[RMDB]
RNA sequence: GGGAACGACUCGAGUAGAGUCGAAAACAUGACCUGUUCGCAGGUCAUGAAAGUGGACGAGGAGCGAUGAACCCACACAAAACAAGACAUCGCAAAAUAAAUAAAGCAAGUGCUUCGGCACUUGCAACAUAUAUAGAAGCUUCGGCUUCUAUAUAUGAAAAGAAACAACAACAACAAC
Reactivity to DMS in 0.01 (KOAc 150mM, MgCl2 10mM, bicine 150mM(pH8.5), 24C), signal-to-noise 4, nucleotides 027 to 126: c010a010u000g000a010c000c000u010g010u000u020c200g060c000a000g010g010u020c000a010u000g010a020a080a110g010u000g000g000a130c100g020a130g020g000a140g030c000g010a010u000g000a180a120c080c000c010a030c020a120c130a070a040a050a060c130a020a030g000a170c020a000u000c010g020c010a150a060a090a110u010a060a060a100u000a070a120a120g010c000a010a010g010u000g010c010u000u010c170g010g000c000a000c000u000u000g010c010a020a060
Reactivity to 2A3 in 0.01 (KOAc 150mM, MgCl2 10mM, bicine 150mM(pH8.5), 24C), signal-to-noise 4, nucleotides 027 to 126: c010a000u000g010a010c000c000u000g000u040u070c160g010c080a000g000g010u010c000a000u000g000a000a000a030g010u020g000g040a030c090g050a090g130g110a180g060c000g000a010u010g010a060a090c010c040c000a000c010a010c010a020a100a020a000c060a010a020g060a020c010a010u000c000g000c010a020a020a000a040u130a020a040a010u100a030a060a010g000c000a000a000g000u010g000c000u030u110c170g070g000c000a000c000u010u000g000c000a000a010